Source: RMDB library M2PK50, as collected in RNAgym. The record gives the reactivity of an RNA of 177 nucleotides to 2A3 and DMS. For 2A3, 1,503 sequencing reads were counted. For 2A3 the reverse transcriptase was SuperScript II with manganese. High DMS reactivity at an A or C suggests that its Watson-Crick edge is free.
RNA sequence: GGGAACGACUCGAGUAGAGUCGAAAAGUCGUGUCCUUCGGGACACGACAAACAUGGUAAACGCCGACACCUUGAAAGAUCGAAAAACGAUCAAGGCGUAAAAAAGUCUAACCUUCGGGUUAGACAAUCAAUUGAUUGACUUCGGUCAAUCAAUUGAAAAAGAAACAACAACAACAAC
Reactivity to 2A3 in 0.01 (KOAc 150mM, MgCl2 10mM, bicine 150mM(pH8.5), 24C), signal-to-noise 1, nucleotides 027 to 126: g010u010c020g010u000g000u000c000c000u000u050c150g070g000g010a000c000a000c000g010a000c000a000a000a000c000a050u090g000g000u090a190a070a000c000g000c000c020g030a040c020a070c080c000u020u020g050a180a090a060g000a040u000c010g050a260a120a060a000a110c000g020a000u000c010a020a080g020g000c030g000u030a020a000a030a000a030a030g000u000c000u000a000a000c000c000u030u050c250g100g000g000u000u000a000g000a000c000a010a030
Reactivity to DMS in 0.01 (KOAc 150mM, MgCl2 10mM, bicine 150mM(pH8.5), 24C), signal-to-noise 2, nucleotides 027 to 126: g010u010c010g040u020g010u000c000c000u000u040c200g030g010g000a000c000a000c000g000a000c020a050a060a070c150a120u030g010g020u000a090a130a080c060g020c010c010g010a090c090a110c000c010u000u020g010a060a110a090g000a020u000c000g010a060a050a090a080a230c030g010a020u000c000a070a070g010g030c000g010u010a000a020a090a070a040a060g020u000c000u000a010a000c010c000u000u010c180g010g020g020u000u020a000g000a000c000a020a030